Chemical mapping of a 177-nucleotide RNA with DMS and 2A3.
[RMDB]
RNA sequence: GGGAACGACUCGAGUAGAGUCGAAAAAAGGAAGUCGGCGGCAAACCUUUGAGUUCUGAGGAACACGAAGUCACAUGAGGCUUAAUUUACUGGGUAAGCUAGCCUAACGAAGCAGAGCCCAAUAGCUGAUUCGUAUAAUGUUCGCAUUAUACGAAUCAAAAGAAACAACAACAACAAC
Reactivity to DMS in 0.01 (KOAc 150mM, MgCl2 10mM, bicine 150mM(pH8.5), 24C), signal-to-noise 2, nucleotides 027 to 126: a050a090g000g010a110a070g020u000c080g030g010c040g000g000c050a090a160a100c080c030u000u000u000g000a100g010u000u000c010u000g010a140g010g000a070a020c030a150c120g000a070a020g020u000c140a070c140a080u010g000a100g020g010c030u000u000a030a030u020u000u010a060c110u010g000g000g000u020a080a190g000c050u000a050g000c000c010u000a050a070c100g020a110a070g010c020a060g000a140g010c020c030c010a070a070u010a080g020c220u000
Reactivity to 2A3 in 0.01 (KOAc 150mM, MgCl2 10mM, bicine 150mM(pH8.5), 24C), signal-to-noise 2, nucleotides 027 to 126: a000a000g050g010a030a000g040u090c050g040g000c000g000g000c010a050a060a060c010c000u080u070u120g070a060g010u020u010c030u060g080a080g110g100a050a000c020a000c060g040a040a000g030u050c020a020c030a140u150g060a040g030g000c000u010u010a040a010u050u040u040a090c040u070g020g000g030u030a040a000g040c020u020a040g020c020c000u000a080a000c030g050a030a000g000c010a000g000a030g070c000c010c010a020a050u130a050g030c060u030
The data come from the RNA Mapping Database (RMDB), library RFMREP. For 2A3, 3,055 sequencing reads were counted. For 2A3 the reverse transcriptase was SuperScript II with manganese. The reactions ran in a buffer of 150 mM KOAc, 10 mM MgCl2 and 150 mM bicine (pH 8.5), at 24 C.